[RMDB]
RNA sequence: GGGAACGACUCGAGUAGAGUCGAAAACGUCGCGACGUGAGUCGCGACGAACUAACAGGCUACGGCCUGUUAGAACCGUGGUCUACGGACCACGGAGCCUCACCGGUGACGGUGAGGCAAGCUGCGCGUUCGCGCGCAGCAACGCUCUCUUCGGAGAGCGAAUUUAAAAGCCAGGACGGUCACCUUUGGGGUGGUGACAAGUGUGAUCACUUGGGUGGUGGCUGUGUUUGCGUCUCUCCCAGGAAUCAUCUUUACCAGAUCUCAAUACACUUCAAUUCGUUGAAGUGAAAAGAAACAACAACAACAAC
Reactivity to DMS in 0.01 (KOAc 150mM, MgCl2 10mM, bicine 150mM(pH8.5), 24C), signal-to-noise 2, nucleotides 027 to 266: c010g020u000c010g010c000g020a030c000g000u060g010a290g050u000c000g050c030g050a010c000g000a050a100c000u000a000a000c000a000g010g010c010u000a070c180g030g000c000c000u000g000u000u000a000g010a140a210c010c000g030u000g000g000u000c010u010a170c160g020g000a020c000c000a010c000g000g000a070g000c000c000u000c000a030c000c020g030g000u000g000a100c020g000g030u000g000a070g010g050c000a010a010g010c000u000g000c000g010c000g040u010u010c230g060c020g050c000g040c000a000g010c000a050a120c010g020c000u010c000u000c010u020u040c200g030g000a020g010a020g000c000g010a020a020u020u020u040a070a130a160a200g000c090c080a070g000g010a090c120g010g000u000c030a030c040c000u010u010u010g010g000g010g040u010g000g000u010g000a070c080a060a080g020u000g010u000g000a070u000c080a040c000u000u000g000g010g040u000g010g020u000g020g030c020u010g020u000g020u020u020u010g010c030g000u000c000u010c020u000c020c030c000a040g000g000a170a040u000c050a020u000c020u000u000u040a060c100c150a080g000a090u000c030u000c060a080a080u010a220
Reactivity to 2A3 in 0.01 (KOAc 150mM, MgCl2 10mM, bicine 150mM(pH8.5), 24C), signal-to-noise 4, nucleotides 027 to 266: c010g000u010c000g050c010g010a020c050g090u180g110a070g020u030c000g010c000g000a000c000g000a000a000c000u000a000a000c000a000g000g050c000u020a060c230g150g000c000c010u000g000u000u000a000g000a040a000c010c000g000u000g000g000u000c020u030a110c300g100g000a000c000c000a000c000g000g000a010g000c000c000u000c010a000c010c000g010g050u050g040a020c000g000g000u000g000a000g000g000c010a000a010g000c000u000g000c000g000c010g040u040u110c220g040c010g000c010g010c090a000g000c000a010a030c000g000c000u000c010u000c000u050u090c240g080g000a000g000a000g000c000g000a000a010u030u050u100a120a220a020a000g030c040c030a020g020g090a030c030g080g000u010c000a010c010c000u140u250u170g060g010g020g020u040g020g020u020g000a030c030a040a080g080u110g040u030g110a060u130c040a030c140u030u040g060g030g020u050g000g080u040g040g020c070u030g050u020g070u140u200u210g060c060g080u040c030u020c010u020c010c030c010a020g030g010a030a030u040c020a010u020c040u080u120u040a110c020c020a090g100a300u070c060u040c060a090a090u190a130

The data come from the RNA Mapping Database (RMDB), library POS240. The record gives the reactivity of an RNA of 307 nucleotides to DMS and 2A3. The reactions ran in a buffer of 150 mM KOAc, 10 mM MgCl2 and 150 mM bicine (pH 8.5), at 24 C. The 2A3 profile rests on 4,314 reads.